RNA sequence: GGGAACGACUCGAGUAGAGUCGAAAAGUACGAUCCGUUUUCUUUGAGUCGCGUUGUUUGGGAAUGCAGCGCAAAGUAGGUGGUAAAUUCCAUCUAAAGCUAAAUAUUGGUGCGAGACCGAUAGCGAGUAGGAUAAAUUGUUCGCAAUUUAUCCUACAAAAGAAACAACAACAACAAC
Reactivity to 2A3 in 0.01 (KOAc 150mM, MgCl2 10mM, bicine 150mM(pH8.5), 24C), signal-to-noise 7, nucleotides 027 to 126: g060u060a040c070g030a090u050c050c030g010u040u040u050u060c050u080u060u130g100a070g050u100c040g010c010g020u010u040g040u030u070u120g080g010g030a070a040u050g000c000a010g000c010g000c020a010a020a010g110u050a010g010g000u010g020g000u040a140a200a180u170u030c000c000a000u000c010u030a080a060a020g030c020u050a070a130a130u160a140u080u090g020g000u020g010c030g020a050g110a040c010c010g040a030u010a010g050c030g010a050
Reactivity to DMS in 0.01 (KOAc 150mM, MgCl2 10mM, bicine 150mM(pH8.5), 24C), signal-to-noise 5, nucleotides 027 to 126: g020u000a090c140g000a060u000c040c010g010u000u000u010u010c030u000u010u010g000a090g010u000c110g020c030g000u000u000g000u010u000u010g020g010g000a110a090u000g000c030a030g000c010g020c040a050a060a070g010u000a020g020g020u010g010g000u000a090a090a170u000u000c000c000a010u000c020u000a020a080a090g000c080u000a040a070a120u000a070u010u000g000g020u000g010c140g000a150g000a110c020c010g000a050u000a060g010c080g010a140